RNA sequence: GGGAACGACUCGAGUAGAGUCGAAAAAGCUCGUCUACGGACGAGCAAAGUGGUGUUUGGCAAUGGUAGAACUCACACUGGUGAGGUAGAUGGAUCCGGUGGUUCUAGACUUGCCAACUACUGCUAAUUCUGCAUCUUUGUUCGCAAAGAUGCAGAAAAAAGAAACAACAACAACAAC
Reactivity to DMS in 0.01 (KOAc 150mM, MgCl2 10mM, bicine 150mM(pH8.5), 24C), signal-to-noise 2, nucleotides 027 to 126: a120g000c000u000c000g020u000c000u000a120c120g010g010a000c000g000a000g010c000a010a020a040g000u010g000g020u000g010u000u020u000g000g030c000a030a010u000g010g010u000a020g000a010a010c030u020c130a300c000a050c030u000g000g000u000g020a300g010g030u030a050g000a180u090g000g020a150u020c010c010g010g000u010g000g000u000u010c010u000a010g010a130c060u000u000g000c000c010a010a010c040u000a000c000u000g000c010u000a070a120
Reactivity to 2A3 in 0.01 (KOAc 150mM, MgCl2 10mM, bicine 150mM(pH8.5), 24C), signal-to-noise 4, nucleotides 027 to 126: a000g000c000u000c000g020u000c010u010a070c300g090g010a000c020g010a000g000c000a020a020a020g010u000g010g020u020g010u000u000u090g030g010c020a020a070u190g110g030u050a000g000a010a000c010u030c100a090c000a030c070u060g000g020u040g050a070g040g160u190a120g080a270u230g140g030a050u040c000c000g010g000u010g000g000u000u000c000u010a050g020a280c000u010u010g000c000c000a010a000c000u050a010c000u000g000c000u020a040a100
The data come from the RNA Mapping Database (RMDB), libraries RFM100 and RFMREP. Structure probing data (DMS and 2A3) for a 177-nucleotide construct. 2A3 adducts were read by reverse transcription with SuperScript II with manganese.